[RMDB]
RNA sequence: GGGAACGACUCGAGUAGAGUCGAAAACAUCUAUAUUGGACUGGACCAUCCGGCCUGCUGGGCGGAAGAGCCACCUUACGAAUUCUUGACCCCUUUGUAUACCGGUCCUGUGGCGAGUCACAGCGUGGAAGUAGUCUAUUUUCGAAUAGACUACUUCAAAAGAAACAACAACAACAAC
Reactivity to DMS in 0.01 (KOAc 150mM, MgCl2 10mM, bicine 150mM(pH8.5), 24C), signal-to-noise 9, nucleotides 027 to 126: c070a090u010c070u010a130u010a160u010u000g000g010a080c080u000g000g000a140c060c050a180u000c040c030g000g010c030c020u000g020c130u000g010g020g020c030g010g010a050a070g000a190g010c030c020a040c050c100u000u000a090c120g000a090a100u010u000c050u010u000g000a190c040c010c020c070u000u000u010g020u000a090u010a080c090c050g000g010u000c050c030u000g020u000g010g010c060g010a090g010u000c020a040c060a070g010c120g010u010g010
Reactivity to 2A3 in 0.01 (KOAc 150mM, MgCl2 10mM, bicine 150mM(pH8.5), 24C), signal-to-noise 8, nucleotides 027 to 126: c020a060u080c040u160a160u050a150u240u170g040g020a040c060u020g010g040a040c010c010a050u010c010c020g110g060c060c010u130g080c060u140g030g000g030c010g040g020a070a030g030a010g030c010c010a030c020c010u040u090a060c060g090a130a110u130u060c040u080u160g100a130c000c010c010c000u040u080u070g090u040a100u030a070c020c030g010g020u050c000c020u030g020u020g020g010c040g020a020g030u060c020a010c030a160g060c080g110u100g120